The data come from the RNA Mapping Database (RMDB), library OK2TST. Structure probing data (2A3 and DMS) for a 177-nucleotide construct. The DMS profile rests on 30,338 reads. For 2A3, 18,067 sequencing reads were counted.
RNA sequence: GGGAACGACUCGAGUAGAGUCGAAAACGAUGCGCCUUCCGCCUGGCUGGAAGAAGUGCGCAUCUUGGUCGCCCAAUAGGGCCAGACGCUGAGCUUGUCUUCCUUUUCCGGCGGCUGCGGACGGAUAAGGAUAGGAAAAUUUCGAUUUUCCUAUCCUAAAAGAAACAACAACAACAAC
Reactivity to 2A3 in 0.01 (KOAc 150mM, MgCl2 10mM, bicine 150mM(pH8.5), 24C), signal-to-noise 6, nucleotides 027 to 126: c030g000a010u010g000c010g000c000c000u020u000c010c020g050c040c070u160g210g100c130u120g040g020a030a020g020a030a020g100u140g080c000g000c000a000u000c000u000u070g030g000u050c030g030c000c020c000a030a120u140a120g010g020g010c050c010a030g000a040c020g000c080u150g030a030g040c040u100u120g030u010c000u020u060c010c000u050u050u060u040c040c010g040g000c010g020g000c040u060g020c020g070g030a040c020g000g010a020u080a150
Reactivity to DMS in 0.01 (KOAc 150mM, MgCl2 10mM, bicine 150mM(pH8.5), 24C), signal-to-noise 9, nucleotides 027 to 126: c170g010a020u000g000c000g010c010c000u000u000c000c300g010c030c020u010g020g010c150u010g010g010a110a050g000a030a020g010u010g030c020g020c000a000u000c000u000u010g010g010u010c080g010c010c010c050a110a110u010a070g010g010g010c070c080a030g000a050c040g010c050u000g010a100g010c060u000u000g010u000c030u000u010c020c010u000u000u000u000c060c080g010g010c040g010g000c080u000g010c060g010g000a080c060g010g000a090u010a110